[RMDB]
RNA sequence: GGGAACGACUCGAGUAGAGUCGAAAACGCUACGCGGUUUGCCCCCUGUCGAUCGCACAUAUUGCUUCGACGGGUUCUCCCGCUGCGCCUUCGCCGCUGAGACCGGGAUCGCUCUAUACUCACUGCACGUGGAGUAUUCUUUCGAGAAUACUCCACGAAAAGAAACAACAACAACAAC
Reactivity to DMS in 0.01 (KOAc 150mM, MgCl2 10mM, bicine 150mM(pH8.5), 24C), signal-to-noise 2, nucleotides 027 to 126: c060g000c040u030a050c150g020c010g000g000u000u020u000g030c080c080c060c020c020u000g030u000c010g010a020u010c270g000c020a060c300a160u000a110u020u010g000c000u000u000c000g010a000c010g000g010g000u000u000c100u000c060c010c000g030c050u000g000c050g010c040c050u000u000c030g010c020c040g030c020u000g030a130g030a080c080c040g010g020g000a080u000c030g010c030u000c040u000a060u010a070c110u000c050a030c080u000g000c140a130
Reactivity to 2A3 in 0.01 (KOAc 150mM, MgCl2 10mM, bicine 150mM(pH8.5), 24C), signal-to-noise 2, nucleotides 027 to 126: c010g040c080u110a050c080g000c020g030g030u040u040u150g000c020c000c000c010c000u010g010u010c000g030a050u030c100g080c150a040c040a110u300a130u080u270g000c010u050u010c000g000a010c000g000g000g000u010u010c020u000c020c010c000g000c030u040g010c000g050c040c020u070u070c070g000c000c020g000c060u040g070a070g000a160c050c040g070g040g060a120u070c010g060c050u000c010u030a100u040a100c030u020c020a060c060u120g020c090a030
An RNA of 177 nucleotides, treated with DMS and 2A3 and read out base by base. Conditions: 150 mM KOAc, 10 mM MgCl2 and 150 mM bicine (pH 8.5), 24 C. The 2A3 profile rests on 1,658 reads.